Annotation:
This 177-nucleotide RNA was probed chemically with 2A3 and DMS. For DMS the reverse transcriptase was MarathonRT. For 2A3, 4,069 sequencing reads were counted.
[RMDB]
RNA sequence: GGGAACGACUCGAGUAGAGUCGAAAAUGAUCGAGAGAUCUAACGAUGUACGCGAGUCAAUAGCACAGACUCGAGCGAAAGCUCGGUCGAAAGACCGCGUACAUCGGUCGGCAAGUGUCAAGUCAAAACUAUUACUCGGGUUCGCCCGAGUAAUAGUAAAAGAAACAACAACAACAAC
Reactivity to 2A3 in 0.01 (KOAc 150mM, MgCl2 10mM, bicine 150mM(pH8.5), 24C), signal-to-noise 3, nucleotides 027 to 126: u080g000a010u020c000g010a000g000a010g000a150u020c010u030a070a030c020g000a010u000g000u010a000c000g010c000g020a080g040u000c000a000a120u150a140g140c120a050c050a130g010a010c030u070c170g000a000g000c000g060a100a010a000g000c000u000c010g020g010u010c010g020a020a020a000g010a000c000c000g000c010g020u010a000c000a000u000c000g000g000u040c020g030g040c040a110a100g070u040g050u230c050a050a000g020u020c000a000a050a060
Reactivity to DMS in 0.01 (KOAc 150mM, MgCl2 10mM, bicine 150mM(pH8.5), 24C), signal-to-noise 5, nucleotides 027 to 126: u000g020a010u000c000g000a250g000a260g000a020u000c000u000a090a100c010g010a020u000g000u000a000c000g000c010g010a090g000u010c000a050a090u000a140g000c180a110c250a160g010a020c000u010c010g010a010g020c000g010a130a120a160g010c010u000c000g000g000u000c000g010a100a080a130g000a000c000c000g010c010g010u000a000c000a000u000c000g000g000u000c050g010g010c040a060a080g000u010g000u000c040a050a110g010u000c060a040a090a130